This 177-nucleotide RNA was probed chemically with DMS and 2A3. The data come from the RNA Mapping Database (RMDB), library RFM100. For 2A3, 1,161 sequencing reads were counted. For DMS, 3,750 sequencing reads were counted.
[RMDB]
RNA sequence: GGGAACGACUCGAGUAGAGUCGAAAAGAAAUAAAAGGAUGUUAUCGCUUUAAGGCGAGCAGGAACCUAUUUAAAUGAAUCGAUACGAUAUAUGUCGAUUUCUUUUAAGUAGGUUCUUUUAUUUUAAUCUAGUUUAGACUUUCGAGUCUAAACUAGAAAAAGAAACAACAACAACAAC
Reactivity to DMS in 0.01 (KOAc 150mM, MgCl2 10mM, bicine 150mM(pH8.5), 24C), signal-to-noise 2, nucleotides 027 to 126: g000a050a020a020u000a020a000a070a060g000g020a160u000g000u000u020a140u010c000g020c000u000u040u040a120a140g020g020c000g000a010g000c060a020g010g020a030a030c000c000u010a000u010u010u000a010a000a010u020g030a030a000u020c000g010a000u010a050c170g040a150u050a100u040a300u010g000u000c010g000a010u000u010u020c010u000u000u000u000a000a000g020u000a000g010g010u000u000c000u000u000u020u000a000u000u000u020u000a040a170
Reactivity to 2A3 in 0.01 (KOAc 150mM, MgCl2 10mM, bicine 150mM(pH8.5), 24C), signal-to-noise 2, nucleotides 027 to 126: g040a010a010a000u030a020a000a000a020g100g020a090u020g030u080u110a060u080c000g010c040u130u240u230a150a060g060g000c000g000a000g000c000a000g070g020a010a000c000c000u000a000u010u010u010a000a010a010u010g010a000a010u010c010g000a010u010a040c070g030a050u050a080u030a010u300g000u010c000g010a010u030u100u220c010u000u060u010u000a000a000g010u000a010g020g020u000u010c000u000u000u000u000a000u000u000u000u030a000a000